RNA sequence: GGGAACGACUCGAGUAGAGUCGAAAAGGCGACGAUGGAGUGCGAUUCGGAAAUCGGGGGGGAAACCCCACAGCCGGAAGGAAGUGGAGGGAAGUGGAGCUCUGCUCCUCCCACAGGAUCUGUGCGGAUGAGAAGGGGAUUUCGAUCCCCUUCUCAUAAAAGAAACAACAACAACAAC
Reactivity to 2A3 in 0.01 (KOAc 150mM, MgCl2 10mM, bicine 150mM(pH8.5), 24C), signal-to-noise 1, nucleotides 027 to 126: g090g040c050g010a020c000g040a090u120g070g040a080g000u070g000c010g040a060u040u050c050g040g000a040a150a060u100c030g000g000g000g000g000g030g030a030a050a070c000c000c010c000a030c000a000g040c010c020g000g030a020a010g070g010a030a040g050u050g020g050a050g010g000g000a000a080g080u110g050g020a020g020c000u040c070u300g050c000u000c010c000u000c000c030c010a030c030a020g080g000a100u070c020u030g050u030g030c090g040g020
Reactivity to DMS in 0.01 (KOAc 150mM, MgCl2 10mM, bicine 150mM(pH8.5), 24C), signal-to-noise 3, nucleotides 027 to 126: g010g010c040g000a070c080g020a090u010g010g010a080g020u000g010c090g010a100u000u000c060g000g000a060a090a090u010c100g010g000g010g000g010g010g010a070a080a230c030c000c000c000a060c040a080g000c020c020g010g010a090a090g010g010a090a050g030u000g000g000a100g000g000g010a090a080g010u000g020g000a050g000c040u000c130u000g010c020u000c000c020u000c010c010c020a040c090a050g010g000a080u010c060u000g020u010g020c090g000g000
This 177-nucleotide RNA was probed chemically with 2A3 and DMS. The reactions ran in a buffer of 150 mM KOAc, 10 mM MgCl2 and 150 mM bicine (pH 8.5), at 24 C. The 2A3 profile rests on 1,207 reads.